RNA sequence: GGGAACGACUCGAGUAGAGUCGAAAAACGUGCAGAGUCAUGGGAUCCGCAGUGUGAUCUAGGUACGAUCACAUGCGUACGUACCAUGCUAGACAUGUGUGUCGUACCAUGUCGGAUCAGGUACUACCAACCCAUACCUGUUCGCAGGUAUGGGUUGAAAAGAAACAACAACAACAAC
Reactivity to DMS in 0.01 (KOAc 150mM, MgCl2 10mM, bicine 150mM(pH8.5), 24C), signal-to-noise 5, nucleotides 027 to 126: a090c050g030u000g010c070a150g000a100g010u010c030a050u010g020g010g020a060u000c100c010g010c020a180g010u020g010u000g000a020u000c010u010a120g020g010u010a070c220g010a010u000c000a010c000a010u000g010c110g020u000a040c100g030u000a060c020c020a030u000g000c020u000a090g010a140c010a000u000g000u010g020u000g000u010c080g000u010a010c000c020a060u000g010u010c060g020g000a030u000c030a060g000g010u010a040c030u010a100c170
Reactivity to 2A3 in 0.01 (KOAc 150mM, MgCl2 10mM, bicine 150mM(pH8.5), 24C), signal-to-noise 4, nucleotides 027 to 126: a000c040g020u040g000c060a050g050a060g300u170c010a040u050g040g120g000a030u020c020c010g000c050a060g060u030g010u020g090a020u020c040u080a120g140g200u160a040c120g000a000u000c000a000c000a020u040g010c040g030u020a000c030g000u020a020c000c000a030u010g000c000u100a070g090a130c020a010u020g200u030g000u030g060u140c030g000u000a010c000c010a070u070g100u130c050g020g000a030u050c030a030g090g020u020a040c000u040a060c040